Chemical mapping of a 177-nucleotide RNA with DMS and 2A3. Reactivities are given for positions 27 through 126.
RNA sequence: GGGAACGACUCGAGUAGAGUCGAAAAGAUAUGGAUCAGUAAUGAGCAACAGCUCACGGACUCGGAAACGAGUUUGAGACAUGCUCGAUACUGAUCCUAAGUCAAAAGUGCGAGUUCGCUCGCACAACACAUAUCUGAACUUCGGUUCAGAUAUGUGAAAAGAAACAACAACAACAAC
Reactivity to DMS in 0.01 (KOAc 150mM, MgCl2 10mM, bicine 150mM(pH8.5), 24C), signal-to-noise 8, nucleotides 027 to 126: g010a050u000a300u010g000g000a000u000c000a010g020u020a020a170u000g000a010g020c000a040a090c280a230g000c090u000c010a080c300g000g000a000c000u000c000g000g010a120a100a220c000g000a010g020u000u000u010g010a020g000a040c060a180u000g010c000u000c020g010a140u000a000c000u000g010a000u010c000c000u000a010a070g020u010c050a080a060a120a090g010u000g010c000g010a020g010u000u000c250g010c000u010c010g010c000a000c010a090a160
Reactivity to 2A3 in 0.01 (KOAc 150mM, MgCl2 10mM, bicine 150mM(pH8.5), 24C), signal-to-noise 7, nucleotides 027 to 126: g010a000u050a020u160g000g000a000u010c010a000g010u030a070a130u220g020a010g000c040a020a200c070a230g050c040u000c020a030c110g090g020a000c000u000c010g020g020a030a080a060c000g000a010g010u010u040u050g020a010g010a010c060a090u210g000c000u010c010g000a020u020a040c000u010g000a000u010c000c000u010a010a000g030u020c020a030a030a070a140g010u020g000c000g010a010g010u080u140c260g120c120u000c000g000c010a000c000a000a030
The 2A3 profile rests on 30,752 reads.